[RMDB]
Annotation
Chemical mapping of a 177-nucleotide RNA with 2A3 and DMS. For DMS, 8,630 sequencing reads were counted. Values cover nucleotides 27 to 126. Conditions: 150 mM KOAc, 10 mM MgCl2 and 150 mM bicine (pH 8.5), 24 C.
RNA sequence: GGGAACGACUCGAGUAGAGUCGAAAAUUAUUUUCGGCGUGCUGGCAGGAAGCAUCCAAUUUGAUGGUGUGGCCAAGUACGAAACCAAAGUCGAUAGCCAACGAGUACAUGCCAGAACCUAUAUAUACAAUAGAGCCAUAUUCGUAUGGCUCUAUUGAAAAGAAACAACAACAACAAC
Reactivity to 2A3 in 0.01 (KOAc 150mM, MgCl2 10mM, bicine 150mM(pH8.5), 24C), signal-to-noise 3, nucleotides 027 to 126: u070u010a080u030u090u030u070c050g040g000c010g030u030g010c010u030g030g000c020a060g060g080a060a050g000c020a020u020c000c030a050a150u190u100u110g150a170u110g000g060u040g020u060g040g010c020c020a050a010g010u020a030c020g000a070a020a010c030c020a070a020a000g060u030c020g070a070u070a040g020c010c000a040a010c060g010a000g020u030a010c020a040u050g010c010c010a010g030a050a030c000c000u040a000u000a030u000a040u000a260
Reactivity to DMS in 0.01 (KOAc 150mM, MgCl2 10mM, bicine 150mM(pH8.5), 24C), signal-to-noise 7, nucleotides 027 to 126: u010u010a100u000u000u000u010c060g010g010c060g020u000g000c020u010g010g020c030a140g000g010a110a140g000c030a030u010c010c110a090a150u010u010u010g010a110u000g000g020u000g010u000g010g000c010c050a040a130g010u000a030c040g000a070a090a100c070c090a050a070a130g010u000c030g000a110u000a070g010c030c030a050a090c080g000a080g020u000a050c050a080u000g010c040c020a080g000a080a100c050c030u000a080u010a090u000a100u000a200